[RMDB]
RNA sequence: GGGAACGACUCGAGUAGAGUCGAAAACAUGCCUAAGACUUGUUUCGGACCCAUAGUCCGAAAGAUCUUUGUUGAUGGCGUGCCAUUUGUAGUAUCUUGUGGUUAUCACUACAAAGAAUUAGGUUUAUAACGUAGACCUUCGGGUCUACGAAAAGAAACAACAACAACAAC
Reactivity to DMS in 0.01 (KOAc 150mM, MgCl2 10mM, bicine 150mM(pH8.5), 24C), signal-to-noise 3, nucleotides 027 to 129: c090a050u000g000c030c010u020a130a180g000a060c040u030u080g020u000u040u080c060g030g030a060c020c100c160a100u080a220g040u030c000c040g060a010a030a010g010a140u030c000u000u000u000g030u000u070g000a130u060g010g050c100g000u030g010c000c020a070u090u010u050g000u030a000g000u060a100u000c110u040u040g030u030g030g060u020u070a040u050c120a070c070u010a010c030a000a000a000g040a090a130u170u030a000g000g040u050u030u000a050u060a100a180
Reactivity to 2A3 in 0.01 (KOAc 150mM, MgCl2 10mM, bicine 150mM(pH8.5), 24C), signal-to-noise 7, nucleotides 027 to 129: c000a000u040g000c000c000u020a080a000g010a020c020u080u280g030u060u060u000c030g000g000a010c080c050c100a160u160a110g000u000c000c000g000a000a000a010g020a020u030c040u110u120u130g010u000u060g030a170u080g000g000c040g020u000g010c010c010a040u050u020u010g010u020a040g030u020a040u080c080u060u190g060u120g060g070u160u040a070u120c070a040c000u010a000c000a000a000a000g050a040a060u200u170a130g040g130u080u050u090a140u070a090a050

Annotation: An RNA of 170 nucleotides, treated with DMS and 2A3 and read out base by base. Values cover nucleotides 27 to 129. DMS adducts were read by reverse transcription with MarathonRT. The RNA was probed in 150 mM KOAc, 10 mM MgCl2 and 150 mM bicine (pH 8.5) at 24 C.